[RMDB]
RNA sequence: GGGAACGACUCGAGUAGAGUCGAAAAUCAUUACCACCCAGAGUUCAUAGUUGAUGUUAGGUAGGGUUCAUUCUUGGUGUUACACAUGUUAUGUGUUCUGACAAACGUGGAAUGACGUGUAUCCACCUGAACCCCUUUGUUUCGACAAAGGGGUUCAAAAAGAAACAACAACAACAAC
Reactivity to DMS in 0.01 (KOAc 150mM, MgCl2 10mM, bicine 150mM(pH8.5), 24C), signal-to-noise 1, nucleotides 027 to 126: u000c090a090u000u000a080c100c080a080c030c070c010a070g010a150g010u000u000c120a040u000a110g000u000u000g050a110u000g010u000u010a050g010g000u000a090g010g030g000u000u000c080a050u000u000c030u000u000g020g000u000g020u000u000a010c020a010c020a030u000g010u000u010a070u000g030u020g030u000u000c040u000g020a030c140a030a060a170c170g000u000g000g000a090a020u020g010a020c140g020u010g000u000a120u010c100c020a070c120c140